RNA sequence: GGGAACGACUCGAGUAGAGUCGAAAAACAGGAGGAACAGGAGCAGCACCUUGCUGUUGUUUGCGAUCGGACGCGAAGGACUGAGUUGAAGGCGAGACCUUGACUGUACUCGCCAUGGUGGUGGGGGAUUAACGAAGGGCUUCGGCCCUUCGUUAAUAAAAGAAACAACAACAACAAC
Reactivity to DMS in 0.01 (KOAc 150mM, MgCl2 10mM, bicine 150mM(pH8.5), 24C), signal-to-noise 1, nucleotides 027 to 126: a140c060a090g040g020a000g070g000a120a130c060a090g010g020a120g050c060a050g040c130a130c130c090u000u010g000c000u000g020u050u000g030u000u010u020g030c060g020a090u000c050g000g000a110c070g010c030g000a100a080g000g030a110c020u000g010a080g010u000u000g010a060a090g030g000c000g000a040g000a040c040c110u010u000g020a030c180u010g020u000a100c020u000c020g020c010c020a020u000g010g040u010g000g010u010g010g000g060g050g000
Source: RMDB library OK2TST, as collected in RNAgym.
An RNA of 177 nucleotides, treated with DMS and read out base by base.
The RNA was probed in 150 mM KOAc, 10 mM MgCl2 and 150 mM bicine (pH 8.5) at 24 C.